[RMDB]
RNA sequence: GGGAACGACUCGAGUAGAGUCGAAAAUAGGUGUAAACAAGCUCCAGAACUUUAGGGCCCAGUCAUCAGGAGAAAGGCCAAGUUUGAGCUAUGCACAGCUCAGUUUUGAUGACCGGAGAGUGAUGACGAUCAUACUUGGGUUCGCCCAAGUAUGAUCAAAAGAAACAACAACAACAAC
Reactivity to DMS in 0.01 (KOAc 150mM, MgCl2 10mM, bicine 150mM(pH8.5), 24C), signal-to-noise 3, nucleotides 027 to 126: u010a070g020g010u010g020u010a050a080a100c130a140a120g010c030u010c020c090a080g000a100a090c040u010u000u000a100g000g010g010c040c020c050a130g010u000c030a000u000c020a040g000g020a120g010a070a100a110g000g000c030c010a020a090g010u000u010u000g010a000g020c000u000a100u000g010c270a090c180a050g010c000u000c020a040g010u000u000u000u000g020a050u000g000a050c020c030g000g010a120g010a260g030u000g000a050u000g000a060c060
Reactivity to 2A3 in 0.01 (KOAc 150mM, MgCl2 10mM, bicine 150mM(pH8.5), 24C), signal-to-noise 2, nucleotides 027 to 126: u120a020g000g010u050g020u080a150a190a050c080a140a040g040c000u000c030c050a030g070a160a060c030u120u150u180a110g030g040g000c000c000c000a000g020u000c010a030u010c000a010g000g040a050g080a150a050a010g040g020c000c000a000a030g020u050u030u010g010a000g010c000u000a070u220g110c080a070c040a090g000c000u020c030a020g000u000u030u040u210g090a090u160g080a140c000c000g030g020a060g000a000g070u050g000a040u030g000a000c030
Description:
The record gives the reactivity of an RNA of 177 nucleotides to DMS and 2A3. DMS (dimethyl sulfate) methylates the pairing face of unpaired adenines and cytosines. For DMS, 2,328 sequencing reads were counted. 2A3 adducts were read by reverse transcription with SuperScript II with manganese. Values cover nucleotides 27 to 126. It was measured as part of the RMDB library OK2TRN. For DMS the reverse transcriptase was MarathonRT. The RNA was probed in 150 mM KOAc, 10 mM MgCl2 and 150 mM bicine (pH 8.5) at 24 C.